[RMDB]
RNA sequence: GGGAACGACUCGAGUAGAGUCGAAAAAUACACCAGCAGUAGGGCUCAGCGACCGUCACAACAAGGUUGUGCUGGUAUCCGACGGUCGUAUAGCCCUGUCUUGCAGGUUGCCUUGCACUGACGUGCCACACCAUUUACAGAUUCGUCUGUAAAUGAAUCACCAUACUAGAUUCGUCUAGUAUGGUGAAAAAGAAACAACAACAACAAC
Reactivity to DMS in 0.01 (KOAc 150mM, MgCl2 10mM, bicine 150mM(pH8.5), 24C), signal-to-noise 4, nucleotides 027 to 156: a110u000a090c070a200c020c000a080g040c030a060g030u000a040g030g010g030c010u000c120a170g020c010g000a010c010c000g000u000c000a170c080a090a090c100a080a100g020g020u010u000g030u000g020c010u010g010g010u000a070u000c070c020g020a050c010g010g000u000c010g010u000a110u000a070g000c000c010c000u000g020u010c020u000u010g030c030a110g010g020u000u000g010c040c080u000u010g010c020a080c030u000g010a150c190g010u010g020c000c070a100c060a130c150c000a030u000u000u000a010c000a000g010a070u010u000c300g030u010c010u000g000u000a020a010a000u010g000a070a130
Reactivity to 2A3 in 0.01 (KOAc 150mM, MgCl2 10mM, bicine 150mM(pH8.5), 24C), signal-to-noise 5, nucleotides 027 to 156: a000u140a010c090a000c020c000a000g000c000a010g020u150a000g000g010g010c010u020c050a010g000c000g000a000c010c000g010u010c020a070c050a200a140c070a240a150g050g010u050u020g030u030g060c050u060g050g000u030a030u030c020c040g000a000c000g000g010u000c000g000u030a040u030a010g010c020c010c000u000g000u000c010u010u080g000c010a020g010g020u090u130g050c010c000u010u060g000c010a040c080u140g070a070c090g020u050g020c040c020a100c010a020c030c000a000u000u000u000a010c010a010g010a030u030u110c150g080u010c100u000g000u000a000a000a000u000g000a000a080

Chemical mapping of a 207-nucleotide RNA with DMS and 2A3. For DMS the reverse transcriptase was MarathonRT.